[RMDB]
RNA sequence: GGGAACGACUCGAGUAGAGUCGAAAAAUAGUAUAGACCUCGUUCGACUUGGUUCAACUUGGUCUUUGGCCUACGGAUGUGGAAUAUGGAUAGAUUCAGAGAAGUCGAGAAAAACUGGAUUAGCUGCAGCAAGAGGAGUCAAAAUUAGCCUGGUCCACCCAUUAAUGAGGUUCGCCUCAUUAAUGGGAAAAGAAACAACAACAACAAC
Reactivity to DMS in 0.01 (KOAc 150mM, MgCl2 10mM, bicine 150mM(pH8.5), 24C), signal-to-noise 1, nucleotides 027 to 156: a060u000a110g030u000a120u000a100g000a020c000c000u010c100g000u000u000c070g080a070c020u000u000g050g030u000u000c030a060a060c010u000u000g010g010u000c020u010u000u000g010g040c040c010u000a240c060g030g010a120u010g010u010g010g000a100a070u000a040u000g010g040a090u000a080g000a090u000u000c070a110g010a140g000a050a080g030u000c050g020a210g000a110a030a040a050a070c040u000g000g010a080u000u000a090g010c020u000g060c040a070g020c050a080a060g000a040g000g020a030g020u000c030a020a030a090a110u000u000a060g000c020c020u000g060g020u000c060c020a120
Reactivity to 2A3 in 0.01 (KOAc 150mM, MgCl2 10mM, bicine 150mM(pH8.5), 24C), signal-to-noise 3, nucleotides 027 to 156: a020u120a020g080u050a080u050a210g020a020c020c030u010c020g000u000u050c130g010a030c060u200u250g140g010u160u000c020a020a020c000u020u030g000g010u000c000u040u010u030g020g020c010c000u010a010c090g020g050a090u100g060u080g050g040a040a030u100a040u100g060g010a000u080a080g060a080u090u030c050a020g040a030g010a150a020g050u100c080g000a020g060a030a070a040a030a020c040u050g010g010a030u030u090a040g010c030u040g020c030a030g030c000a030a010g010a010g050g000a010g020u020c010a000a000a050a140u040u010a040g020c010c000u080g020g010u020c030c010a040

About this RNA:
Chemical mapping of a 207-nucleotide RNA with DMS and 2A3. For 2A3 the reverse transcriptase was SuperScript II with manganese. The reactions ran in a buffer of 150 mM KOAc, 10 mM MgCl2 and 150 mM bicine (pH 8.5), at 24 C. The 2A3 profile rests on 1,362 reads.